An RNA of 207 nucleotides, treated with 2A3 and DMS and read out base by base. The RNA was probed in 150 mM KOAc, 10 mM MgCl2 and 150 mM bicine (pH 8.5) at 24 C. For DMS, 3,048 sequencing reads were counted. Reactivities are given for positions 27 through 156.

RNA sequence: GGGAACGACUCGAGUAGAGUCGAAAAGGGUGAUGUCUCCUAACCUUUAUCAUUGGGGGCACUCGGUCGUGCUGUGGGUAGAAAUUUUAUUUCGUGCCUACCUUAGACGCUUGUCGUCGGGAGUAUGUGGGACUGAUGAACUUCGGUUCAUCAGUAAUCUACUCCCCAGAUUCGUCUGGGGAGUAGAAAAAGAAACAACAACAACAAC
Reactivity to 2A3 in 0.01 (KOAc 150mM, MgCl2 10mM, bicine 150mM(pH8.5), 24C), signal-to-noise 2, nucleotides 027 to 156: g080g000g000u050g040a080u060g020u000c010u030c030c020u030a040a080c020c000u090u240u100a200u120c100a090u060u130g000g000g000g000g000c000a020c010u020c000g050g010u020c030g030u020g040c130u110g010u020g020g000g000u030a020g140a030a010a030u180u290u190u150a210u080u060u080c030g040u140g010c000c010u020a030c010c000u020u080a040g010a020c030g030c040u060u300g100u260c020g020u010c000g010g010g010a070g040u110a070u130g060u140g010g040g020a000c000u010g000a000u000g000a000a000c000u030u050c200g060g000u010u000c000a000u000c000a000g000u000a010a010
Reactivity to DMS in 0.01 (KOAc 150mM, MgCl2 10mM, bicine 150mM(pH8.5), 24C), signal-to-noise 1, nucleotides 027 to 156: g020g010g010u000g020a070u010g020u000c030u010c010c010u000a080a090c100c060u020u010u000a120u000c120a130u000u020g030g000g000g050g040c000a040c030u000c050g000g000u000c050g000u000g000c050u000g000u000g030g000g020u000a260g010a050a040a060u000u010u010u000a010u000u040u000c000g020u000g010c020c000u000a070c020c070u000u010a110g020a080c030g030c080u010u000g020u000c030g020u000c000g030g000g000a090g020u000a050u010g040u010g000g010g030a060c000u000g000a000u010g000a000a000c000u000u000c300g110g010u000u000c000a000u000c000a010g000u010a000a190